[RMDB]
RNA sequence: GGGAACGACUCGAGUAGAGUCGAAAAUUAAUUAUCAGGAAUAUAUCCCUUAAGUUAGAUAGUUUGACACCUUUUUGAGCUUGCCGGAUGAUCCAACAGUUGUGGCUCAGCUUGGUCAUCUAUUUCAACCUUCACAAAUUAGGGCUGAGUGACACAGGUACUGCCAUAGAUUCGUCUAUGGCAGUACAAAAGAAACAACAACAACAAC
Reactivity to DMS in 0.01 (KOAc 150mM, MgCl2 10mM, bicine 150mM(pH8.5), 24C), signal-to-noise 1, nucleotides 027 to 156: u000u000a110a150u030u010a050u000c030a090g040g030a170a150u010a100u010a100u000c020c010c020u000u010a080a130g010u010u000a080g010a060u000a050g050u000u010u010g060a110c000a100c040c000u000u010u010u000u000g060a040g050c000u000u010g020c010c100g010g000a060u000g030a110u000c030c060a120a020c020a100g010u010u010g000u010g000g020c020u010c010a060g030c080u000u000g040g000u020c010a070u020c060u010a070u000u000u000c000a030a030c030c020u020u000c090a180c040a140a040a230u000u000a110g010g010g000c000u010g000a140g010u000g020a140c070a130c170a120g060